[RMDB]
An RNA of 177 nucleotides, treated with 2A3 and DMS and read out base by base. Values cover nucleotides 27 to 126. Conditions: 150 mM KOAc, 10 mM MgCl2 and 150 mM bicine (pH 8.5), 24 C. The DMS profile rests on 964 reads.

RNA sequence: GGGAACGACUCGAGUAGAGUCGAAAAAAGCACCACAUCUCCGGGCGAUGUCGAAGCAAUGGCACAGUCCUAGGCAUCGUUCCUCCAUCCGAUGUCGAAGCAAUGGCGCAGUCUUAGGCAUCGGCGGGUCUAAUAGACCGUUCGCGGUCUAUUAGACAAAAGAAACAACAACAACAAC
Reactivity to 2A3 in 0.01 (KOAc 150mM, MgCl2 10mM, bicine 150mM(pH8.5), 24C), signal-to-noise 2, nucleotides 027 to 126: a000a000g140c100a080c080c010a020c010a110u050c080u080c090c100g000g010g010c000g000a010u020g000u020c030g040a030a010g010c030a040a100u300g030g000c120a100c080a300g100u160c000c010u000a000g030g000c010a000u000c000g010u060u030c020c000u000c010c000a090u020c010c000g020a010u000g000u040c020g010a020a010g030c060a050a100u140g160g000c130g000c080a020g030u040c010u000u040a010g010g010c000a000u000c000g000g010c000g010g020
Reactivity to DMS in 0.01 (KOAc 150mM, MgCl2 10mM, bicine 150mM(pH8.5), 24C), signal-to-noise 2, nucleotides 027 to 126: a100a110g000c070a110c030c050a100c090a130u010c020u010c040c060g020g000g000c020g000a040u000g040u000c050g000a170a060g010c040a050a040u000g000g030c040a070c130a100g020u000c040c000u020a190g000g000c030a010u000c010g000u000u000c010c030u000c050c060a080u010c020c010g000a020u000g000u040c000g010a020a010g000c090a060a120u020g020g000c050g050c070a080g000u000c020u000u010a110g000g000c000a020u000c000g000g030c300g000g010